[RMDB]
Structure probing data (2A3) for a 207-nucleotide construct. Values cover nucleotides 27 to 156.

RNA sequence: GGGAACGACUCGAGUAGAGUCGAAAAACCUUUGUGACGUUGUCAGAAUAACCCAUAUAAGGAUUGCCCAUUGGGCUUGAUUUAUGGAUGAAAUUCUUGGAUUUACGUCACUCUGGUAAAAGAGUUCAUGAAUUUCUUCGGAAAUUCAUGAACUCAAGAUGACAUGAGUCUUCGGACUCAUGUCAUCAAAAGAAACAACAACAACAAC
Reactivity to 2A3 in 0.01 (KOAc 150mM, MgCl2 10mM, bicine 150mM(pH8.5), 24C), signal-to-noise 3, nucleotides 027 to 156: a000c020c000u010u010u020g000u000g000a000c000g010u010u020g010u020c010a010g010a020a030u050a080a120c000c000c010a010u030a000u010a030a080g190g030a070u050u060g010c010c050c230a280u300u300g000g000g000c010u020u040g020a040u020u010u050a000u010g030g020a030u060g140a130a220a130u070u020c030u060u160g120g030a100u230u220u180a010c000g000u000c000a000c000u000c000u010g000g000u040a060a070a040a060g010a010g000u010u010c000a000u000g000a000a000u030u000u000c020u030u160c300g030g010a000a000a000u010u000c010a010u000g000a000a000c000u000c000a000a000